[RMDB]
RNA sequence: GGGAACGACUCGAGUAGAGUCGAAAAAGCCAAUCCUUCGGGAUUGGCUACAGCAACGAAGCAAAGCAACGAGACAACACGAGCAAAAGAUCGAGCAUGCUACACACCCCAUCUUCGGAUGGGGUAAUAAAAGUUGCGAAUUCGUUCGCAACUUUUAAAAAGAAACAACAACAACAAC
Reactivity to DMS in 0.01 (KOAc 150mM, MgCl2 10mM, bicine 150mM(pH8.5), 24C), signal-to-noise 1, nucleotides 027 to 126: a120g000c000c000a020a010u000c000c010u010u010c230g030g000g000a010u000u000g000g000c000u000a000c040a100g000c050a080a040c080g000a080a120g000c040a090a140a110g030c110a030a080c110g010a050g010a080c090a010a050c100a130c050g000a050g000c080a050a110a060a060g020a050u000c050g000a080g050c050a100u000g000c070u000a050c140a110c090a040c020c020c000c010a010u000c000u000u010c180g030g010a020u000g000g000g010g030u000a000a020